[RMDB]
RNA sequence: GGGAACGACUCGAGUAGAGUCGAAAACAUUGGUAUGGUGAUCUCCUCGCAUCGCAGAUUGGGAUCCUUGGGUAUGACUGGCACUCCGUAACCGGGUGCGGGACUCGCGUCCAGGCCGUGACCACCCUCAGAAAUGAUACUUCGGUAUCAUUUCUGAAAAAGAAACAACAACAACAAC
Reactivity to 2A3 in 0.01 (KOAc 150mM, MgCl2 10mM, bicine 150mM(pH8.5), 24C), signal-to-noise 5, nucleotides 027 to 126: c040a050u090u210g030g030u170a100u070g050g020u070g030a060u010c020u030c020c010u040c040g020c010a140u090c060g010c100a040g060a170u110u160g050g010g020a060u110c020c040u040u090g050g000g010u130a090u160g070a100c040u050g100g030c010a010c060u080c020c030g070u060a060a060c070c010g030g000g000u020g020c000g000g020g000a040c040u030c060g030c020g050u010c010c010a010g000g040c010c020g010u030g000a020c010c010a040c020c010c000
Reactivity to DMS in 0.01 (KOAc 150mM, MgCl2 10mM, bicine 150mM(pH8.5), 24C), signal-to-noise 6, nucleotides 027 to 126: c080a090u010u010g020g010u010a070u010g020g040u000g000a080u000c050u000c030c060u000c070g010c070a060u000c110g010c060a060g000a090u010u000g010g010g010a070u000c050c060u010u010g010g010g020u000a060u000g010a100c060u010g010g010c050a040c050u010c020c040g000u010a080a110c190c060g010g000g010u000g010c010g000g000g000a060c100u000c110g010c150g010u010c020c020a090g010g000c040c030g020u010g000a100c050c040a090c030c040c060